[RMDB]
RNA sequence: GGGAACGACUCGAGUAGAGUCGAAAAACUCCGGGGGUGAUGUGAUGCAUUUGGCGUUGAUAGCCACUUUCAAGGUUAAACCUGCCUACCUGCUGGGUUUUCUUCUACGUAUGCGGUGGUCACCACGGAUCAAUAUGCGGUUCGCCGCAUAUUGAUCAAAAGAAACAACAACAACAAC
Reactivity to DMS in 0.01 (KOAc 150mM, MgCl2 10mM, bicine 150mM(pH8.5), 24C), signal-to-noise 4, nucleotides 027 to 126: a040c030u010c000c020g000g000g000g010g010u010g000a030u020g000u020g000a140u030g000c080a060u000u020u000g000g000c050g010u020u010g000a070u030a090g000c040c030a060c080u010u010u020c110a090a020g020g000u010u020a040a090a120c050c010u000g010c040c030u000a030c030c030u010g010c060u000g000g000g000u000u000u010u000c060u020u000c020u000a060c070g000u020a050u020g010c060g010g020u010g010g010u000c070a070c020c030a110c160g000
Reactivity to 2A3 in 0.01 (KOAc 150mM, MgCl2 10mM, bicine 150mM(pH8.5), 24C), signal-to-noise 8, nucleotides 027 to 126: a000c040u040c020c000g020g000g010g000g050u040g040a060u060g080u110g070a060u070g030c040a030u020u010u200g070g000c030g040u060u070g040a080u130a040g030c020c010a060c040u120u190u100c090a100a030g050g010u080u150a060a090a060c010c020u030g020c010c010u080a100c010c020u070g030c040u040g020g020g000u020u020u060u020c010u030u000c010u020a040c020g080u090a030u090g020c020g030g070u120g050g020u050c010a020c030c010a020c020g040

The data come from the RNA Mapping Database (RMDB), library OK1LIB.
Structure probing data (DMS and 2A3) for a 177-nucleotide construct.
For 2A3 the reverse transcriptase was SuperScript II with manganese.
In probing experiments dimethyl sulfate is read out at A N1 and C N3, which are open when not base-paired.